RNA sequence: GGGAACGACUCGAGUAGAGUCGAAAAGACGACGUGCCCACCAUCUUCAAGGGGCUACAGCUCGACAUCGGCGCGCCGCCGCAAUUCAUGGACUUCCGUUUCACCCUGCACGACCGCUGGCACGGCGCAGACUCUAAAGGUUCGCCUUUAGAGUCUGAAAAGAAACAACAACAACAAC
Reactivity to 2A3 in 0.01 (KOAc 150mM, MgCl2 10mM, bicine 150mM(pH8.5), 24C), signal-to-noise 9, nucleotides 027 to 126: g070a020c050g010a010c030g030u060g030c020c010c000a040c020c020a110u100c040u230u090c090a140a100g050g010g020g000c010u040a030c020a040g010c020u030c030g040a050c020a100u100c060g050g000c020g000c010g010c020c020g030c010c010g010c030a050a110u120u100c040a050u090g060g020a050c030u100u020c040c020g020u010u030u040c040a070c000c000c000u020g010c020a020c040g060a060c010c030g010c040u030g030g000c020a020c060g010g000c010g000
Reactivity to DMS in 0.01 (KOAc 150mM, MgCl2 10mM, bicine 150mM(pH8.5), 24C), signal-to-noise 7, nucleotides 027 to 126: g000a170c040g000a050c050g010u010g000c010c000c070a130c090c060a100u020c070u030u010c090a100a100g000g010g010g010c040u000a060c090a070g000c030u000c010g010a070c060a080u030c100g010g000c040g000c060g010c100c050g010c010c020g010c060a090a050u020u020c080a060u020g010g010a080c080u010u000c050c040g020u010u010u010c050a090c020c010c010u010g000c020a070c070g000a110c060c040g010c060u020g000g000c010a040c010g000g000c070g000
Chemical mapping of a 177-nucleotide RNA with 2A3 and DMS. High 2A3 reactivity points to a flexible backbone, as in loops and unpaired stretches. For 2A3, 22,477 sequencing reads were counted. The data come from the RNA Mapping Database (RMDB), library OK1LIB. The reactions ran in a buffer of 150 mM KOAc, 10 mM MgCl2 and 150 mM bicine (pH 8.5), at 24 C. Values cover nucleotides 27 to 126.